The record gives the reactivity of an RNA of 177 nucleotides to 2A3 and DMS. The DMS profile rests on 1,615 reads. 2A3 adducts were read by reverse transcription with SuperScript II with manganese. It was measured as part of the RMDB library OK2TST.
RNA sequence: GGGAACGACUCGAGUAGAGUCGAAAAUUCGGUAAGAUCUUCCGCCAUUCGCUUGGUCAGUGUGGUGACCAGCACGCGUUCGUUAAUUGCCGCUCGCUGACGAAUCUCCGAAAGAAGAUCAUCAACCCAGUUCGUUGGUAUUCGUACCAACGAACUGAAAAGAAACAACAACAACAAC
Reactivity to 2A3 in 0.01 (KOAc 150mM, MgCl2 10mM, bicine 150mM(pH8.5), 24C), signal-to-noise 2, nucleotides 027 to 126: u050u030c030g020g060u060a080a030g000a040u000c010u050u000c030c020g020c080c020a090u170u060c060g050c110u130u180g060g030u060c040a070g020u030g090u110g150g190u000g050a020c000c010a000g010c030a020c050g060c010g020u050u060c000g020u060u110a110a130u230u120g010c020c000g060c060u080c040g030c010u030g020a020c020g020a040a050u070c020u000c040c020g000a000a030a000g010a040a000g020a030u020c010a030u050c020a020a090c010c020
Reactivity to DMS in 0.01 (KOAc 150mM, MgCl2 10mM, bicine 150mM(pH8.5), 24C), signal-to-noise 2, nucleotides 027 to 126: u000u000c080g020g020u000a080a050g000a020u000c000u000u010c030c030g000c220c070a190u020u000c090g000c080u000u000g030g000u010c000a050g010u010g020u000g000g030u000g000a010c020c060a030g000c030a110c060g010c170g010u000u010c060g030u000u000a040a080u000u020g000c050c070g020c090u000c110g010c050u000g000a040c040g010a070a060u010c070u000c120c070g020a040a050a100g000a040a050g010a020u010c020a060u000c060a060a090c080c030